[RMDB]
RNA sequence: GGGAACGACUCGAGUAGAGUCGAAAAUUGGUUCUGACAUGGGCUUAGCAUGGUAGGCUAGGUAAAGUCAGCUCUGUGGAGGUGGGCACAGUUUGUCAUGUGGUCAGGUGGCAUGCAGAGGACAAAAAGAUGCAGCUCUGAACUUGAGGAUUUAAGCACGGAUUAAAGAAUUCGUUCUUUAAUCCGUAAAAGAAACAACAACAACAAC
Reactivity to DMS in 0.01 (KOAc 150mM, MgCl2 10mM, bicine 150mM(pH8.5), 24C), signal-to-noise 3, nucleotides 027 to 156: u010u010g010g020u010u000c020u000g010a070c020a110u000g020g010g000c040u000u000a050g030c040a070u010g040g040u010a140g010g010c010u000a030g010g010u000a060a100a150g010u000c020a050g010c050u010c040u000g030u010g020g020a080g010g020u010g020g020g050c020a080c050a080g000u000u010u010g020u000c020a100u010g010u010g010g010u000c040a100g030g020u000g010g020c030a070u000g010c040a090g020a090g020g010a150c070a010a060a070a090a080g000a130u000g020c030a080g000c020u000c030u010g010a090a060c040u000u000g000a090g010g010a180u000u000u000a030a140g040c180
Reactivity to 2A3 in 0.01 (KOAc 150mM, MgCl2 10mM, bicine 150mM(pH8.5), 24C), signal-to-noise 5, nucleotides 027 to 156: u080u070g050g010u090u060c020u020g010a040c040a150u150g030g080g020c030u020u030a020g000c020a050u080g140g060u170a090g080g000c010u010a020g000g040u050a060a040a010g010u020c020a020g010c020u000c020u060g050u050g020g040a040g010g040u070g020g020g000c020a030c010a040g030u070u120u090g030u070c040a050u080g030u050g040g040u030c010a020g050g000u040g050g000c020a020u050g000c010a010g020a050g080g020a030c060a040a100a000a010a000g050a020u060g020c020a020g020c020u000c010u060g040a070a050c030u050u070g010a020g030g030a070u070u100u160a060a030g050c050